Structure probing data (DMS and 2A3) for a 177-nucleotide construct. For DMS the reverse transcriptase was MarathonRT. Conditions: 150 mM KOAc, 10 mM MgCl2 and 150 mM bicine (pH 8.5), 24 C. It was measured as part of the RMDB library OK2TST.

RNA sequence: GGGAACGACUCGAGUAGAGUCGAAAAUCGGAAAAGCUGAGGUUAAACCGGACUCCAGGAUUCUGAAAAAGAUACGCGCAUGUUUUGUACGCGAAUUUUGUUUGAACUACAUUAAACAUGAAGGCAGUCUCCUCAUACAUUUCGAUGUAUGAGGAGAAAAAGAAACAACAACAACAAC
Reactivity to DMS in 0.01 (KOAc 150mM, MgCl2 10mM, bicine 150mM(pH8.5), 24C), signal-to-noise 4, nucleotides 027 to 126: u020c050g000g010a060a060a110a210g020c020u000g010a050g000g010u010u000a050a140a120c180c130g000g000a050c020u000c020c000a030g020g000a230u000u010c020u010g010a040a060a090a090a070g020a080u000a070c160g000c010g010c010a020u000g000u000u000u000u000g010u000a030c280g000c080g000a070a050u010u000u010u020g010u000u000u000g000a110a100c140u010a020c040a050u010u000a020a020a030c010a030u000g000a050a060g000g000c030a100g000
Reactivity to 2A3 in 0.01 (KOAc 150mM, MgCl2 10mM, bicine 150mM(pH8.5), 24C), signal-to-noise 2, nucleotides 027 to 126: u060c010g020g040a020a040a070a000g110c030u030g030a040g030g010u060u120a130a130a070c060c050g060g000a010c020u000c000c030a050g080g060a080u080u020c000u070g040a090a050a000a000a100g120a050u120a050c090g000c020g000c020a010u010g030u060u100u030u100g020u040a010c050g000c020g060a050a070u090u130u050u170g140u040u050u090g030a010a030c030u030a010c010a030u170u140a000a100a010c000a000u020g040a030a020g060g020c030a020g030